[RMDB]
RNA sequence: GGGAACGACUCGAGUAGAGUCGAAAAGAGCGAGAAACCCAAAUUUGGUAGGGGAACCGUCCUGAAGGAAUCAAACGGAAGGGACGGAUGGUAUCUUCGGAUGCCAUAGAUAGAUGGCUACCGCUCUCUGAUAUUUAUCAUUCGUGAUAAAUAUCAGAAAAGAAACAACAACAACAAC
Reactivity to DMS in 0.01 (KOAc 150mM, MgCl2 10mM, bicine 150mM(pH8.5), 24C), signal-to-noise 9, nucleotides 027 to 126: g010a030g020c000g010a110g000a110a090a120c040c000c020a080a090a150u020u020u020g010g010u020a070g010g000g000g000a120a220c010c010g010u000c000c000u000g000a300a170g000g020a100a120u040c260a080a120a130c030g000g000a220a190g000g010g010a010c000g000g000a070u010g000g000u000a000u000c000u000u040c200g010g000a010u000g000c000c000a010u000a020g000a080u010a070g000a090u040g010g010c030u000a110c040c020g010c040u000c030u010
Reactivity to 2A3 in 0.01 (KOAc 150mM, MgCl2 10mM, bicine 150mM(pH8.5), 24C), signal-to-noise 9, nucleotides 027 to 126: g020a000g020c050g020a050g100a130a120a120c020c010c040a050a100a070u290u150u110g060g010u060a050g000g030g020g030a020a050c000c000g000u000c000c030u080g020a050a030g050g040a040a170u210c080a120a080a040c020g030g030a040a030g040g000g000a000c000g000g000a000u000g000g000u020a010u010c000u020u040c180g080g000a010u010g000c000c000a000u000a000g040a010u060a010g120a060u090g070g020c020u030a040c010c010g000c000u010c000u000